[RMDB]
RNA sequence: GGGAACGACUCGAGUAGAGUCGAAAACAGGAUUAAAUCCUCAUGACUGGUGGAUCAAAGUUAUCGAACAUUCUUUUCCAACUCCUGUUCCUGCAGAAAUGGCUGAAGAGCUAUGGAGUUACUUUUCCAAAAAGACGGGUUACACGAUUCAUCCUCAAUCGCCGUAGGAUUUCGAUCCUACGGCGAUAAAAGAAACAACAACAACAAC
Reactivity to 2A3 in 0.01 (KOAc 150mM, MgCl2 10mM, bicine 150mM(pH8.5), 24C), signal-to-noise 1, nucleotides 027 to 156: c010a000g010g000a030u090u190a060a120a060u030c010c030u040c030a160u130g110a070c080u070g030g030u010g000g090a030u010c060a050a120a120g080u150u080a100u280c080g040a020a010c010a070u140u300c040u080u070u110u100c040c010a020a010c040u000c010c000u000g050u080u010c000c090u270g000c000a020g020a020a170a070u250g060g000c010u010g040a030a000g000a060g060c040u040a070u220g000g000a000g000u000u000a000c010u000u060u040u120c130c020a100a070a000a000a040g100a060c120g000g000g070u080u050a070c110a010c050g030a010u040u040c030a100u020c000c000u030c000a020